An RNA of 207 nucleotides, treated with DMS and 2A3 and read out base by base. DMS adducts were read by reverse transcription with MarathonRT. Reactivities are given for positions 27 through 156. The RNA was probed in 150 mM KOAc, 10 mM MgCl2 and 150 mM bicine (pH 8.5) at 24 C. 2A3 adducts were read by reverse transcription with SuperScript II with manganese. For 2A3, 4,829 sequencing reads were counted.

RNA sequence: GGGAACGACUCGAGUAGAGUCGAAAAAAGUACAGUUCUCAGCUCUUCAUAUUCAUGAUCUCACUCAAUCCUCAGAGCAUCCUGCAAAGCAGGGUACAAUUAUUGUCCUAGUGUACUGAUGAAGUACCAGAGGCAUGGAAGGUUAAGAAUUUGGCCAUGAUUAGGUACUAUUCGUAGUACCUAAUCAAAAAGAAACAACAACAACAAC
Reactivity to DMS in 0.01 (KOAc 150mM, MgCl2 10mM, bicine 150mM(pH8.5), 24C), signal-to-noise 3, nucleotides 027 to 156: a060a090g030u000a040c070a090g010u000u000c020u020c020a120g030c020u010c030u000u000c060a100u000a120u000u020c070a080u000g000a100u010c020u000c010a110c060u000c040a090a060u000c030c020u000c030a110g000a130g010c010a030u000c020c020u010g010c020a120a090a210g030c030a020g000g020g060u010a020c000a090a100u000u020a060u000u000g010u000c030c040u000a120g040u010g020u000a020c000u010g000a160u010g000a140a050g020u000a000c010c020a130g020a060g020g020c060a040u010g010g020a050a050g000g020u010u010a040a080g000a040a110u000u000u000g000g030c020c040a190
Reactivity to 2A3 in 0.01 (KOAc 150mM, MgCl2 10mM, bicine 150mM(pH8.5), 24C), signal-to-noise 7, nucleotides 027 to 156: a010a000g100u080a050c050a030g010u060u010c040u010c030a020g010c030u030c030u120u040c040a070u090a140u230u100c080a080u140g070a120u090c030u030c060a050c040u110c020a070a100u070c010c020u100c060a010g000a000g050c000a020u030c010c010u000g010c060a130a100a140g010c000a010g010g020g000u040a020c040a060a100u180u100a060u160u110g040u080c000c010u030a080g030u030g010u300a010c000u010g090a170u170g030a060a010g000u010a000c000c010a010g040a070g030g000c010a000u030g060g030a050a090g030g020u050u060a060a050g050a110a160u120u080u130g030g010c020c030a030